Chemical mapping of a 177-nucleotide RNA with DMS and 2A3.
For 2A3 the reverse transcriptase was SuperScript II with manganese.
Conditions: 150 mM KOAc, 10 mM MgCl2 and 150 mM bicine (pH 8.5), 24 C.
Reactivities are given for positions 27 through 126.
Source: RMDB library M2PK50, as collected in RNAgym.
For 2A3, 1,454 sequencing reads were counted.
RNA sequence: GGGAACGACUCGAGUAGAGUCGAAAAGCUCAUUACUUCGGUAAUGAGCAAAUAAAUUCAGCGGUAAAAGCUCCGCAAAUAUUACCGCUGAUGCGGACCUUAAAACAGCUAGGUUCGCCUAGCUGAAUCCACUGUAGAUGUUCGCAUCUACAGUGGAAAAAGAAACAACAACAACAAC
Reactivity to DMS in 0.01 (KOAc 150mM, MgCl2 10mM, bicine 150mM(pH8.5), 24C), signal-to-noise 1, nucleotides 027 to 126: g000c000u000c010a000u000u000a000c000u000u000c180g000g030u000a000a010u000g000a030g020c010a000a020a090u000a030a080a030u010u000c010a000g010c000g010g000u010a000a030a140a200g010c090u000c180c140g040c070a050a050a160u010a090u000u000a010c010c010g010c000u020g010a000u000g020c200g020g000a100c070c050u000u000a000a090a070a180c010a020g000c020u000a010g020g010u000u000c170g000c000c000u010a010g010c010u000g010a090a080
Reactivity to 2A3 in 0.01 (KOAc 150mM, MgCl2 10mM, bicine 150mM(pH8.5), 24C), signal-to-noise 1, nucleotides 027 to 126: g010c000u000c000a000u020u020a000c020u000u030c190g110g000u000a000a010u020g000a000g000c000a010a000a010u020a010a050a020u030u000c000a000g010c000g000g000u020a050a040a010a060g060c100u130c160c180g120c180a060a230a000u120a030u000u030a000c000c000g020c010u010g000a000u000g000c060g030g060a100c010c020u100u110a090a150a040a080c000a000g000c000u000a000g000g050u030u040c220g030c040c000u000a000g000c000u010g030a010a040